Record summary:
This 207-nucleotide RNA was probed chemically with 2A3 and DMS.
[RMDB]
RNA sequence: GGGAACGACUCGAGUAGAGUCGAAAACGCACACUUCGGUGUGCGACAAAUCCUAAGUCGGUUGAGCGAAUCGUAACAUCCUGGCCUGUCGGAAACGACAGUGCCAGGUGGAUUCGCAAUGAUGCCGAUAUGGACCAGAUCGGUCUUCGGACCGAAACUAACUGCCAUUUUUCGAAAUGGCAGUUAGAAAAGAAACAACAACAACAAC
Reactivity to 2A3 in 0.01 (KOAc 150mM, MgCl2 10mM, bicine 150mM(pH8.5), 24C), signal-to-noise 5, nucleotides 027 to 156: c000g000c000a000c000a000c000u040u050c110g140g000u000g010u000g000c000g000a010c000a010a140a010u040c000c000u080a140a040g030u000c000g000g010u020u030g040a020g000c000g010a010a000u010c010g020u040a030a040c030a270u120c010c010u010g020g000c000c000u000g010u000c000g010g040a080a070a100c010g000a000c000a010g000u090g050c010c000a000g010g010u000g000g000a000u000u000c000g000c000a010a000u050g010a020u060g010c000c010g000a000u000a010u050g020g000a000c020c010a050g040a260u050c010g000g010u000c000u040u060c170g120g000a010c000c010g010a070a040a000
Reactivity to DMS in 0.01 (KOAc 150mM, MgCl2 10mM, bicine 150mM(pH8.5), 24C), signal-to-noise 3, nucleotides 027 to 156: c000g030c000a010c000a000c010u000u010c300g080g030u000g020u000g020c000g020a050c080a060a140a100u000c010c010u000a050a300g020u000c010g010g000u000u010g000a050g020c020g010a010a000u000c010g040u000a110a040c090a180u000c000c000u000g000g010c000c010u000g000u000c000g020g000a150a100a220c010g010a030c000a010g030u010g000c000c010a000g000g000u000g000g000a030u000u000c010g040c000a020a020u000g000a060u000g010c010c000g010a020u000a280u000g000g000a070c030c030a150g020a170u000c000g010g010u000c000u000u000c250g030g000a010c000c000g020a020a050a150
Overview: The reactions ran in a buffer of 150 mM KOAc, 10 mM MgCl2 and 150 mM bicine (pH 8.5), at 24 C.